[RMDB]
RNA sequence: GGGAACGACUCGAGUAGAGUCGAAAAGAUAUGGAUCCUGGACAUGACGAUGGGUCGGAAACGACCCUGCCGUCAACAGCCUGGAUCCUAAGUCAAAGCGAAGAUGUCCUUCGGGACAUCUUCGCAAGGAAGAAUCAUUGUUCGCAAUGAUUCUUCCAAAAGAAACAACAACAACAAC
Reactivity to 2A3 in 0.01 (KOAc 150mM, MgCl2 10mM, bicine 150mM(pH8.5), 24C), signal-to-noise 1, nucleotides 027 to 126: g030a030u070a040u140g000g000a000u000c000c010u030g030g010a060c080a190u130g010a010c010g030a020u030g000g000g000u010c030g000g020a080a090a020c000g000a010c000c000c000u010g010c040c010g020u000c020a050a030c070a050g040c000c000u010g000g010a000u000c000c010u010a080a000g020u020c050a090a080a020g010c000g010a000a010g010a000u020g000u000c010c000u060u170c300g020g010g020a000c000a000u010c000u010u000c000g000c000a000a000
Reactivity to DMS in 0.01 (KOAc 150mM, MgCl2 10mM, bicine 150mM(pH8.5), 24C), signal-to-noise 3, nucleotides 027 to 126: g000a040u000a300u020g000g010a010u000c000c000u000g010g000a040c070a210u000g030a020c000g010a180u000g010g000g020u000c000g010g010a050a100a190c010g020a010c000c000c000u000g000c160c020g000u000c000a030a090c300a170g010c000c000u000g000g000a020u000c000c000u010a020a070g000u010c050a070a130a140g010c000g000a020a000g020a010u000g000u000c000c000u000u020c220g020g000g010a010c000a000u000c000u000u000c010g010c000a000a020

Chemical mapping of a 177-nucleotide RNA with 2A3 and DMS. High 2A3 reactivity points to a flexible backbone, as in loops and unpaired stretches. For 2A3, 10,193 sequencing reads were counted. For DMS, 4,491 sequencing reads were counted. For 2A3 the reverse transcriptase was SuperScript II with manganese.